[RMDB]
RNA sequence: GGGAACGACUCGAGUAGAGUCGAAAAAAGUGAAAUGAUGGCAAUCAUCUUUCGGGACUGACCUGAAAUGAAGAGAAUACUCAUUGCUGAUCACUUAAACUUUGCAGCUCCUUCGGGAGCUGCAAAGCACUACAAGUAGGUUCGCCUACUUGUAGUGAAAAGAAACAACAACAACAAC
Reactivity to DMS in 0.01 (KOAc 150mM, MgCl2 10mM, bicine 150mM(pH8.5), 24C), signal-to-noise 5, nucleotides 027 to 126: a050a020g010u000g000a020a090a090u000g010a070u010g020g010c080a070a110u000c060a080u000c040u000u000u000c000g000g010g000a300c280u010g010a140c010c000u000g000a000a020a020u010g010a040a100g000a060g010a130a110u000a080c120u000c030a120u000u010g010c070u000g000a130u000c000a010c020u000u000a070a060a180c010u000u000u000g000c000a000g000c000u000c000c000u000u010c210g010g000g020a020g000c000u010g000c000a000a000a000g010
Reactivity to 2A3 in 0.01 (KOAc 150mM, MgCl2 10mM, bicine 150mM(pH8.5), 24C), signal-to-noise 5, nucleotides 027 to 126: a000a010g060u060g020a060a030a060u150g040a020u150g020g000c010a010a030u020c010a040u010c040u010u020u000c000g010g010g020a110c170u200g190a260c020c010u010g020a020a020a020u190g030a040a040g080a000g050a180a060u140a210c020u030c090a020u040u010g000c020u050g030a070u010c000a000c010u040u060a050a040a020c010u010u020u020g010c010a010g010c010u010c000c010u010u080c130g030g000g010a010g010c010u000g010c000a000a000a000g000

Chemical mapping of a 177-nucleotide RNA with DMS and 2A3.
Reactivities are rounded to 0.1 and cut off at 0 and 3.
For DMS, 5,295 sequencing reads were counted.
The reactions ran in a buffer of 150 mM KOAc, 10 mM MgCl2 and 150 mM bicine (pH 8.5), at 24 C.